This 177-nucleotide RNA was probed chemically with DMS and 2A3.
RNA sequence: GGGAACGACUCGAGUAGAGUCGAAAAACGCAGCCUAAUCACCGCCCCUAUAGUCCUUUUCUAAACGCGUGGCCGGUGCAGCUGCCCGCUGGCGCUUGCGAGCGUGCACAGGCCUACAUCCAGGGUCAGUAUCUGUUGGAUUCGUCCAACAGAUACUAAAAGAAACAACAACAACAAC
Reactivity to DMS in 0.01 (KOAc 150mM, MgCl2 10mM, bicine 150mM(pH8.5), 24C), signal-to-noise 5, nucleotides 027 to 126: a080c060g010c030a100g000c020c040u010a080a090u020c050a050c030c030g020c020c020c020c030u000a070u000a090g010u020c030c020u000u020u020u020c050u010a060a100a100c120g020c090g010u000g010g020c010c000g000g010u010g000c030a030g000c040u020g010c010c020c000g010c010u000g000g010c040g010c120u010u010g010c020g010a050g000c010g010u000g000c020a020c040a040g010g010c010c000u010a030c090a080u010c050c070a100g010g010g010u010c070
Reactivity to 2A3 in 0.01 (KOAc 150mM, MgCl2 10mM, bicine 150mM(pH8.5), 24C), signal-to-noise 7, nucleotides 027 to 126: a000c050g000c030a020g030c000c010u080a070a050u080c020a010c020c010g020c000c010c000c000u050a060u060a120g060u060c020c020u060u080u070u030c080u110a120a110a030c060g030c020g060u060g010g000c010c000g010g000u020g000c000a020g020c020u180g000c000c000c010g000c010u050g070g040c070g010c080u030u080g000c010g040a010g000c000g030u020g000c000a000c000a030g010g000c000c000u020a030c010a050u020c030c030a030g040g030g030u070c040
The reactions ran in a buffer of 150 mM KOAc, 10 mM MgCl2 and 150 mM bicine (pH 8.5), at 24 C.